[RMDB]
An RNA of 177 nucleotides, treated with 2A3 and DMS and read out base by base. DMS adducts were read by reverse transcription with MarathonRT. It was measured as part of the RMDB library OK2TRN. Conditions: 150 mM KOAc, 10 mM MgCl2 and 150 mM bicine (pH 8.5), 24 C.
RNA sequence: GGGAACGACUCGAGUAGAGUCGAAAAUACAGUAGCGAUCGCUACUAGCUAGAGUCUAUACAUGUCGCUGAUCUGGAUCGUACUCAUGUCGUACUGAUGCUCAUGUCGCUAGUGGUACCGUCUAGUCGACGCGUUGCGUUUUCGAACGCAACGCGUCAAAAGAAACAACAACAACAAC
Reactivity to 2A3 in 0.01 (KOAc 150mM, MgCl2 10mM, bicine 150mM(pH8.5), 24C), signal-to-noise 2, nucleotides 027 to 126: u130a010c050a010g020u010a000g000c030g090a170u210c150g000c000u030a000c010u000a020g040c000u050a050g010a030g120u000c040u020a050u000a180c040a070u070g080u060c040g010c050u080g040a070u060c000u050g060g050a080u040c020g000u070a000c040u060c030a120u170g110u110c040g010u040a040c010u030g040a070u060g030c040u010c100a060u140g050u030c020g000c040u020a040g040u020g110g000u040a030c000c040g040u030c040u030a040g060u100c040
Reactivity to DMS in 0.01 (KOAc 150mM, MgCl2 10mM, bicine 150mM(pH8.5), 24C), signal-to-noise 1, nucleotides 027 to 126: u010a090c080a060g020u000a020g030c050g030a100u000c180g000c000u000a000c030u000a070g030c050u030a100g000a100g030u000c060u000a060u000a120c080a050u010g000u000c100g010c070u000g010a060u000c080u020g020g000a010u000c180g000u000a020c050u010c030a090u000g010u000c140g020u010a020c080u000g000a050u040g010c010u000c050a040u040g020u000c070g000c030u000a110g000u000g030g040u000a070c070c100g030u020c010u000a060g000u010c180